[RMDB]
RNA sequence: GGGAACGACUCGAGUAGAGUCGAAAACUUGACCAUGGCAGUGUUCUGGCUCCAAAUGGUAGUGAUUCCAAAUAAUGGUUCUGUUAACACUUUGGCAGAAAAUGCCAGCUCAGAUAUUUUGAGAUACGCUAGAAGCUGGAUUCGUCCAGCUUCUAGCAAAAGAAACAACAACAACAAC
Reactivity to DMS in 0.01 (KOAc 150mM, MgCl2 10mM, bicine 150mM(pH8.5), 24C), signal-to-noise 1, nucleotides 027 to 126: c030u010u030g000a050c020c110a060u000g000g000c020a060g030u030g030u000u000c000u000g050g000c110u000c070c020a010a090a070u000g000g010u030a030g000u000g000a080u000u010c000c030a090a080a150u060a090a280u060g000g000u000u000c060u000g010u000u000a060a030c140a060c100u000u000u000g000g030c010a000g050a010a000a100a050u040g000c000c010a030g020c000u000c000a010g030a130u080a060u010u030u050u000g010a000g000a020u000a010c120
Reactivity to 2A3 in 0.01 (KOAc 150mM, MgCl2 10mM, bicine 150mM(pH8.5), 24C), signal-to-noise 2, nucleotides 027 to 126: c000u000u160g030a010c000c000a090u040g010g000c040a020g000u000g230u210u010c000u000g030g030c000u000c040c000a000a230a210u120g010g090u100a050g000u000g000a000u070u000c000c020a020a000a020u280a130a250u180g010g000u030u000c000u080g070u140u070a060a040c070a020c040u000u010u010g000g000c000a000g160a000a020a000a000u090g000c000c020a000g010c000u050c000a030g000a240u000a270u080u100u140u150g260a290g040a120u300a130c180

Record summary: This 177-nucleotide RNA was probed chemically with DMS and 2A3. High 2A3 reactivity points to a flexible backbone, as in loops and unpaired stretches. Source: RMDB library OK1LIB, as collected in RNAgym. For DMS, 1,297 sequencing reads were counted. The 2A3 profile rests on 372 reads. The RNA was probed in 150 mM KOAc, 10 mM MgCl2 and 150 mM bicine (pH 8.5) at 24 C.